[RMDB]
RNA sequence: GGGAACGACUCGAGUAGAGUCGAAAAACGAGCUUAUCGCGCCCGUACAGGUCUGGAGAUAUGAUGGUCUGCUCAGAGGUGAUGCCGCUUUUAAACACCAGCGCCCUCAGCAUGCCGUCGAAGGGAUUUCCGCACGGCACGUCUGCGGCGUGCUGGCUAAAGUGUGAAGCUUCGGCUUCACACUUUAAAAAGAAACAACAACAACAAC
Reactivity to DMS in 0.01 (KOAc 150mM, MgCl2 10mM, bicine 150mM(pH8.5), 24C), signal-to-noise 1, nucleotides 027 to 156: a090c040g000a090g010c020u000u040a050u000c040g020c090g000c020c020c010g110u020a090c110a060g070g010u010c010u000g000g030a130g020a160u000a090u010g010a120u000g020g040u010c060u000g020c030u000c050a090g010a130g000g020u000g010a130u010g000c030c060g010c070u000u000u000u000a070a140a090c140a100c000c010a020g020c010g020c000c000c000u000c000a030g020c030a030u000g000c000c010g010u010c040g020a090a040g000g020g020a300u000u000u010c000c020g040c290a090c020g020g000c020a030c010g010u010c000u000g010c090g040g000c070g040u010g020c010u000g010g020c010
Reactivity to 2A3 in 0.01 (KOAc 150mM, MgCl2 10mM, bicine 150mM(pH8.5), 24C), signal-to-noise 1, nucleotides 027 to 156: a020c040g000a020g000c050u130u070a030u290c050g000c040g050c040c000c030g060u020a090c030a010g000g070u070c050u110g080g000a110g050a100u100a060u100g050a050u060g020g030u050c030u020g030c020u030c090a020g000a020g010g050u090g000a060u070g010c020c020g110c100u000u090u020u180a110a190a040c100a010c050c000a000g000c000g000c000c000c020u020c000a010g000c000a000u040g030c040c010g010u020c010g080a080a070g040g050g060a210u090u120u150c040c000g020c010a020c050g020g000c010a010c050g080u000c000u000g020c020g040g000c060g020u000g000c010u010g000g050c030